Chemical mapping of a 207-nucleotide RNA with DMS. For DMS, 1,521 sequencing reads were counted. Reactivities are given for positions 27 through 156.

[RMDB]
RNA sequence: GGGAACGACUCGAGUAGAGUCGAAAAUUUGAGGAAGCCAUGUUGAAGUCGUUUUUGAAGCUCUCCAGAUAGGUAAUAUUGACAGGAAAAGAUUGUGAAAAGAGGACUAAGAACAGUUCUGUGAGCAUGGUAUGCCCUAGUUAGAUAUGCAGAAUUCAGAUAAGGAUGGGUUCGCCCAUCCUUAUCUAAAAGAAACAACAACAACAAC
Reactivity to DMS in 0.01 (KOAc 150mM, MgCl2 10mM, bicine 150mM(pH8.5), 24C), signal-to-noise 1, nucleotides 027 to 156: u000u020u010g000a050g010g020a130a190g010c020c010a090u000g000u000u020g030a060a300g000u010c030g020u000u000u020u030u030g030a140a080g020c010u000c010u000c010c040a060g010a170u000a040g010g050u010a090a100u010a080u010u000g000a100c050a080g010g000a030a140a100a130g020a000u000u000g050u000g010a100a050a040a160g030a060g000g000a050c060u040a130a110g010a110a070c090a050g000u000u020c050u000g000u000g000a110g040c000a030u010g020g000u000a190u000g000c000c020c030u000a120g040u000u000a070g020a130u000a080u020g050c020a080g010a200a240u000u010c020
For DMS the reverse transcriptase was MarathonRT.